[RMDB]
RNA sequence: GGGAACGACUCGAGUAGAGUCGAAAAGGGGCCGAAUAACCCGAACAACAAUCCGGCCGCCAACGGAAUAAAGACCGACAACUCGGAGCCACAGAAUGGGAACACCGGUUGGUCGAACCAGAGCAGCGCUACAUAUGUUGUUCGCAACAUAUGUAGCAAAAGAAACAACAACAACAAC
Reactivity to DMS in 0.01 (KOAc 150mM, MgCl2 10mM, bicine 150mM(pH8.5), 24C), signal-to-noise 3, nucleotides 027 to 126: g020g010g010g010c020c000g020a080a060u000a150a260c080c030c020g030a090a090c140a110a110c180a080a090u000c070c000g000g030c000c000g010c020c060a100a050c080g000g010a110a090u020a090a100a180g000a070c080c020g010a040c070a040a070c130u010c030g000g010a210g000c020c000a020c130a140g010a070a300u000g000g000g000a050a130c100a060c030c020g000g010u000u030g000g040u010c010g000a090a110c030c020a070g000a140g000c080a070g000c080
Reactivity to 2A3 in 0.01 (KOAc 150mM, MgCl2 10mM, bicine 150mM(pH8.5), 24C), signal-to-noise 3, nucleotides 027 to 126: g020g020g000g010c020c020g050a060a010u090a080a040c040c020c020g050a090a020c080a020a010c020a000a080u050c020c010g000g000c010c010g110c020c020a070a020c040g020g030a070a040u100a060a150a030g020a040c020c020g020a020c030a060a020c030u060c180g040g000a040g040c030c010a100c040a090g250a250a110u240g030g000g030a090a010c070a060c040c000g060g000u030u030g030g010u000c010g000a010a010c020c010a010g050a020g160c090a020g110c040
The data come from the RNA Mapping Database (RMDB), library OK2TST. Structure probing data (DMS and 2A3) for a 177-nucleotide construct. The reactions ran in a buffer of 150 mM KOAc, 10 mM MgCl2 and 150 mM bicine (pH 8.5), at 24 C. 2A3 adducts were read by reverse transcription with SuperScript II with manganese.